RNA sequence: GGGAACGACUCGAGUAGAGUCGAAAAAAUAGCCAAUCCUAAUGGGUAUGUGGUAGCAUCUCAUGGUUUUGAUUUUAUUUUCCUGACUAUUGAUGAUGUUGAGCAUCUUUUCAGGUGCUUAGUGGCCUCAGAAUAUAAGCUUCGGCUUAUAUUCUGAAAAAGAAACAACAACAACAAC
Reactivity to 2A3 in 0.01 (KOAc 150mM, MgCl2 10mM, bicine 150mM(pH8.5), 24C), signal-to-noise 2, nucleotides 027 to 126: a000a000u230a030g030c010c000a010a050u110c030c020u190a170a060u220g040g020g010u170a110u300g160u030g040g090u100a030g000c000a000u000c000u000c010a020u020g020g060u060u040u130u000g030a030u050u060u020u190a200u010u140u080u050c030c030u020g050a030c000u040a100u290u110g020a080u030g020a000u000g030u100u040g030a000g020c000a010u000c040u010u130u070u190c170a020g050g010u010g010c000u040u020a080g040u060g160g000c040c020
Reactivity to DMS in 0.01 (KOAc 150mM, MgCl2 10mM, bicine 150mM(pH8.5), 24C), signal-to-noise 3, nucleotides 027 to 126: a050a050u010a060g020c050c020a050a060u000c020c020u000a110a080u000g000g000g000u010a040u000g020u010g000g020u010a060g010c010a000u000c010u000c010a020u000g000g010u000u000u000u000g000a040u000u000u000u010a100u020u030u000u000c000c040u000g000a030c050u000a050u010u010g000a060u010g000a040u000g000u010u000g010a040g000c010a010u000c000u000u010u010u000c270a050g020g010u000g010c010u000u000a040g010u000g010g010c050c080